[RMDB]
RNA sequence: GGGAACGACUCGAGUAGAGUCGAAAAAGUGUCAUGCUACAUAAUAACAUAACAUUGUAUUAGUCCAGAUUCUCUAGAGAAACAGAACCAAUAGGGGCUGUGUGUGUGUGUGUGUUUGUGUGUGUGUGUUUGUACACACACACAGAAGAGAGAGACAGAUCAUUAUCAGUUUCGACUGAUAAUGAUCAAAAGAAACAACAACAACAAC
Reactivity to 2A3 in 0.01 (KOAc 150mM, MgCl2 10mM, bicine 150mM(pH8.5), 24C), signal-to-noise 3, nucleotides 027 to 156: a000g120u120g010u050c040a040u120g050c020u080a020c050a050u160a110a060u150a180a110c050a020u130a080a030c040a070u070u150g070u110a080u120u100a060g030u000c030c010a020g050a150u120u030c020u000c020u090a050g030a000g030a150a060a000c030a040g090a070a020c030c040a070a060u080a160g000g000g020g010c000u010g010u010g010u000g000u000g000u000g000u000g000u000g050u000g030u020u090u010g040u030g000u000g000u010g000u000g000u000g030u020u070u090g080u100a010c020a000c000a000c000a000c000a000c000a010g010a040a000g050a000g010a000g010a000g010a010c040a050
Reactivity to DMS in 0.01 (KOAc 150mM, MgCl2 10mM, bicine 150mM(pH8.5), 24C), signal-to-noise 3, nucleotides 027 to 156: a060g060u010g020u000c020a030u010g010c020u000a100c050a160u010a140a260u000a030a020c020a040u000a030a030c020a030u000u000g030u000a120u000u000a050g010u000c020c030a130g000a090u000u000c020u000c040u010a150g010a090g000a120a060a130c050a080g000a070a060c040c020a050a150u000a090g010g020g030g030c030u000g000u000g010u000g010u000g000u010g020u030g010u000g060u000g000u000u000u000g030u010g030u000g010u000g030u000g030u000g030u010u000u010g020u020a050c020a010c000a010c010a010c000a000c000a040g000a050a060g010a130g010a110g000a140g020a080c040a110
An RNA of 207 nucleotides, treated with 2A3 and DMS and read out base by base. Source: RMDB library OK3TST, as collected in RNAgym. Values cover nucleotides 27 to 156. The RNA was probed in 150 mM KOAc, 10 mM MgCl2 and 150 mM bicine (pH 8.5) at 24 C. For 2A3, 1,951 sequencing reads were counted.